This 177-nucleotide RNA was probed chemically with 2A3 and DMS. The 2A3 profile rests on 2,034 reads. The DMS profile rests on 2,371 reads.
RNA sequence: GGGAACGACUCGAGUAGAGUCGAAAAUACGUAACAAGACGUCGUUCGGAAGACGUCGAACGGGUGCGAACAUGGAUUUAUGAUUUUCGAGGUCCUGCAUGGCAAGAUCUUGUUCGUGCUGCAGACGCUAUAUUUCGCCGUUCGCGGCGAAAUAUAGAAAAGAAACAACAACAACAAC
Reactivity to 2A3 in 0.01 (KOAc 150mM, MgCl2 10mM, bicine 150mM(pH8.5), 24C), signal-to-noise 2, nucleotides 027 to 126: u100a020c040g020u050a150a010c050a100a040g040a030c020g000u020c020g010u090u110c040g000g010a070a000g020a040c010g000u020c000g000a020a000c020g040g030g030u010g000c010g000a000a000c010a100u140g050g050a070u040u050u080a230u230g130a100u080u080u110u210c080g060a050g000g040u030c010c000u020g100c030a110u170g060g000c000a000a000g000a050u000c010u020u080g010u000u040c010g010u010g000c010u020g030c000a050g020a100c010g000
Reactivity to DMS in 0.01 (KOAc 150mM, MgCl2 10mM, bicine 150mM(pH8.5), 24C), signal-to-noise 2, nucleotides 027 to 126: u010a100c050g030u020a080a120c200a120a130g000a040c040g000u000c010g000u010u000c050g010g030a140a100g010a050c010g030u000c010g000a050a110c070g000g010g030u010g000c000g000a010a010c020a080u010g030g010a040u000u000u010a080u030g010a110u000u000u000u000c080g000a090g020g010u000c030c030u000g010c060a130u010g020g010c020a060a050g000a020u000c030u000u000g020u000u000c000g000u000g000c020u000g000c060a090g000a120c070g000